[RMDB]
RNA sequence: GGGAACGACUCGAGUAGAGUCGAAAAGAUAUGGACUCAAGGAGCGAAGAACGUCAUCUUUCGGAAACGAAAGAGUGACGGGAGCUCACUUGAGUCCUAAGUCAAAAGUGCCCGUUCGCGGGCACAACGUUCCGCUAUAGUUCGCUAUAGCGGAACGAAAAGAAACAACAACAACAAC
Reactivity to 2A3 in 0.01 (KOAc 150mM, MgCl2 10mM, bicine 150mM(pH8.5), 24C), signal-to-noise 1, nucleotides 027 to 126: g030a000u060a000u100g000g000a000c000u000c000a000a000g040g000a020g000c080g150a260a230g140a300a140c000g000u000c000a020u000c000u010u010u000c000g010g010a050a040a020c010g020a010a000a000g090a090g120u050g000a000c000g020g000g070a030g010c000u000c020a210c030u000u000g010a010g000u000c000c000u000a000a000g010u000c010a020a010a060a070g010u000g030c040c080c000g100u010u030c300g000c000g140g020g000c010a000c000a000a000
Reactivity to DMS in 0.01 (KOAc 150mM, MgCl2 10mM, bicine 150mM(pH8.5), 24C), signal-to-noise 1, nucleotides 027 to 126: g000a040u000a300u040g000g000a000c000u000c000a010a010g020g020a020g010c010g020a130a090g050a150a230c000g000u000c000a030u000c000u000u000u010c000g000g020a050a100a260c010g000a020a030a000g000a060g000u000g020a000c020g000g000g000a120g010c010u000c000a060c000u010u010g000a000g040u000c010c000u000a020a100g000u000c020a100a040a250a100g000u000g000c000c000c000g020u000u010c160g050c030g000g000g020c010a000c000a020a070
This 177-nucleotide RNA was probed chemically with 2A3 and DMS. The data come from the RNA Mapping Database (RMDB), library TTRDES. In probing experiments dimethyl sulfate is read out at A N1 and C N3, which are open when not base-paired. DMS adducts were read by reverse transcription with MarathonRT. The reactions ran in a buffer of 150 mM KOAc, 10 mM MgCl2 and 150 mM bicine (pH 8.5), at 24 C. Reactivities are given for positions 27 through 126. 2A3 adducts were read by reverse transcription with SuperScript II with manganese.